[RMDB]
Background
This 207-nucleotide RNA was probed chemically with 2A3. The 2A3 profile rests on 392 reads. The reactions ran in a buffer of 150 mM KOAc, 10 mM MgCl2 and 150 mM bicine (pH 8.5), at 24 C. Source: RMDB library M2RFPK, as collected in RNAgym.
RNA sequence: GGGAACGACUCGAGUAGAGUCGAAAAGUUUACGCUCCAAGAUCGGUGGAUAGCACCCCUAUCAAUAUCUAGGAGAACUGUGCUAUGUUUAGAAGAUUAGGUAGUCUCUAAACAGAACAAUUUACCUCAUACGUUAGGACGUUCGCGUCCUAACGAACAAGGGGAGAGCGUUCGCGCUCUCCCCUUGAAAAGAAACAACAACAACAAC
Reactivity to 2A3 in 0.01 (KOAc 150mM, MgCl2 10mM, bicine 150mM(pH8.5), 24C), signal-to-noise 1, nucleotides 027 to 156: g000u060u060u090a090c010g000c000u000c000c000a050a000g000a030u050c090g100g130u150g000g110a020u120a020g000c010a040c010c000c000c020u010a050u060c020a120a030u060a140u190c040u100a110g000g050a030g020a100a110c080u110g060u070g050c000u010a030u070g010u040u000u000a020g000a300a000g000a040u040u190a020g020g020u000a000g000u000c000u000c000u070a010a010a010c030a080g030a040a010c090a030a030u020u080u140a000c000c000u070c050a030u090a150c010g000u000u000a000g010g000a000c000g040u090u040c210g000c010g080u010c000c060u000a000a000c000g000a000a000